Structure probing data (2A3 and DMS) for a 177-nucleotide construct. The DMS profile rests on 3,767 reads. The reactions ran in a buffer of 150 mM KOAc, 10 mM MgCl2 and 150 mM bicine (pH 8.5), at 24 C. Reactivities are given for positions 27 through 126.
RNA sequence: GGGAACGACUCGAGUAGAGUCGAAAAGAGAUCGCGGCUGGGGCUUAGGACCCCACUCCUGCGAGACAGGAGUAAUCCUAAACAGGGUUUUCACCCUUCCUUUAGUUUCCUUCCUCUCCUGGAGAGGCUAUACCAUUAGCUUCGGCUAAUGGUAUAGAAAAGAAACAACAACAACAAC
Reactivity to 2A3 in 0.01 (KOAc 150mM, MgCl2 10mM, bicine 150mM(pH8.5), 24C), signal-to-noise 4, nucleotides 027 to 126: g050a010g010a020u060c040g010c030g080g030c050u030g020g000g000g000c010u050u070a030g050g060a110c000c020c000c010a000c010u000c010c000u010g010c060g170a150g040a050c020a000g000g000a000g000u030a010a030u000c000c000u010a030a010a020c150a050g010g020g030u070u090u300u300c110a050c010c000c000u000u080c040c000u070u090u070a040g000u010u070u020c010c000u070u150c020c000u020c010u030c010c170u130g050g050a010g000a000g000g000
Reactivity to DMS in 0.01 (KOAc 150mM, MgCl2 10mM, bicine 150mM(pH8.5), 24C), signal-to-noise 4, nucleotides 027 to 126: g010a120g010a030u000c040g020c070g010g020c300u010g010g020g000g010c050u010u010a090g010g000a150c010c030c010c030a040c020u000c030c000u010g030c020g000a110g020a180c040a000g010g000a020g000u000a120a080u000c040c000u000a010a050a090c180a040g010g000g000u000u000u010u000c190a120c010c010c010u000u010c050c010u000u000u000a080g000u000u000u000c030c030u000u030c010c000u000c010u000c020c140u000g020g000a030g000a030g000g000